[RMDB]
This 177-nucleotide RNA was probed chemically with 2A3 and DMS. 2A3 adducts were read by reverse transcription with SuperScript II with manganese.
RNA sequence: GGGAACGACUCGAGUAGAGUCGAAAAGAUAUGGAUCCAUAAGUAUGGAGUCGGACGGUCGGAAACGACCGUCACGACGUAGAGAUACAUGGAUCCUAAGUCAAAGAUGCCUCUUCGGAGGCAUCAAGGCUGAUAGUAAGUUCGCUUACUAUCAGCCAAAAGAAACAACAACAACAAC
Reactivity to 2A3 in 0.01 (KOAc 150mM, MgCl2 10mM, bicine 150mM(pH8.5), 24C), signal-to-noise 1, nucleotides 027 to 126: g000a000u050a000u060g000g000a010u030c020c010a050u080a290a050g010u000a010u060g070g160a180g050u000c000g030g010a000c000g070g010u000c000g000g000a000a010a000c000g000a020c000c020g000u000c010a010c020g000a020c020g030u010a010g010a010g010a010u000a020c020a020u000g020g000a000u010c000c000u000a010a010g000u000c040a070a040a110g000a010u000g010c020c000u000c030u060u070c300g150g010a000g000g000c000a000u000c000a000a000
Reactivity to DMS in 0.01 (KOAc 150mM, MgCl2 10mM, bicine 150mM(pH8.5), 24C), signal-to-noise 1, nucleotides 027 to 126: g000a010u000a080u000g010g000a000u000c000c000a010u000a100a150g000u000a000u000g020g020a070g030u000c000g010g010a000c000g020g030u000c000g020g000a020a040a070c000g010a020c000c010g030u000c000a010c000g020a000c000g000u000a060g000a230g000a020u000a000c030a050u000g010g000a000u000c000c000u000a020a060g000u000c010a170a110a150g000a020u000g000c000c000u000c000u000u000c210g000g010a020g010g020c000a000u000c010a040a080

DMS adducts were read by reverse transcription with MarathonRT.
The DMS profile rests on 2,055 reads.
For 2A3, 3,162 sequencing reads were counted.
Conditions: 150 mM KOAc, 10 mM MgCl2 and 150 mM bicine (pH 8.5), 24 C.